An RNA of 177 nucleotides, treated with DMS and read out base by base. DMS adducts were read by reverse transcription with MarathonRT. The DMS profile rests on 1,254 reads. Source: RMDB library OK2TST, as collected in RNAgym. The RNA was probed in 150 mM KOAc, 10 mM MgCl2 and 150 mM bicine (pH 8.5) at 24 C.
RNA sequence: GGGAACGACUCGAGUAGAGUCGAAAAUAAAAAGCUCAAUGUGCCCGUCAAGACACUUUUUCCUGGUGUUCGAAUUGGAAAAUUUACUAGACGAUCGAGGUCUGUAUUUGGGUUAAAAGGAGAAGAGUAUAGCUAUCUUCUUCGGAAGAUAGCUAUAAAAAGAAACAACAACAACAAC
Reactivity to DMS in 0.01 (KOAc 150mM, MgCl2 10mM, bicine 150mM(pH8.5), 24C), signal-to-noise 1, nucleotides 027 to 126: u000a020a090a110a150a080g020c030u000c010a050a100u020g020u000g010c020c000c020g000u000c120a080a040g000a060c050a010c000u000u000u000u000u010c030c000u000g000g010u000g010u000u000c090g000a110a130u000u000g010g010a050a050a040a040u000u000u000a050c030u010a040g000a040c050g030a100u030c210g000a130g000g010u000c010u000g010u000a050u000u000u010g000g000g020u000u000a030a040a070a110g000g000a110g000a060a090g000a080g020